Structure probing data (2A3) for a 207-nucleotide construct. Conditions: 150 mM KOAc, 10 mM MgCl2 and 150 mM bicine (pH 8.5), 24 C. It was measured as part of the RMDB library M2RFOK. Reactivities are rounded to 0.1 and cut off at 0 and 3.

RNA sequence: GGGAACGACUCGAGUAGAGUCGAAAAACUGACGGUACGCCGUCAGAACGGUAGAAAAGAUGGUUUGAAAACCACGCCUUCUACCAAUAUAGUAAAUAAAUUGGCGGAGCGGUCAUACGUGACCGCAAAAACAUCCUUGGCUUCGGCCAAGGAUGAAGAUCGUCAAAUACUUCGGUAUUUGACGAUCAAAAGAAACAACAACAACAAC
Reactivity to 2A3 in 0.01 (KOAc 150mM, MgCl2 10mM, bicine 150mM(pH8.5), 24C), signal-to-noise 2, nucleotides 027 to 156: a000c000u000g000a000c000g000g000u040a010c170g050c050c000g010u000c000a000g000a020a010c030g010g000u010a010g040a000a020a000a000g080a300u040g020g050u050u110u200g180a160a180a000a000c000c000a000c000g000c000c000u000u000c000u000a000c000c000a010a030u110a010u020a000g160u110a000a050a160u090a120a060a040u140u030g010g000c030g000g000a020g010c000g000g000u000c010a010u060a060c260g060u030g000a000c000c000g000c000a000a000a000a000a010c000a000u000c000c000u000u000g010g000c000u030u020c150g080g000c000c000a000a000g000g000a000u000g000a000a000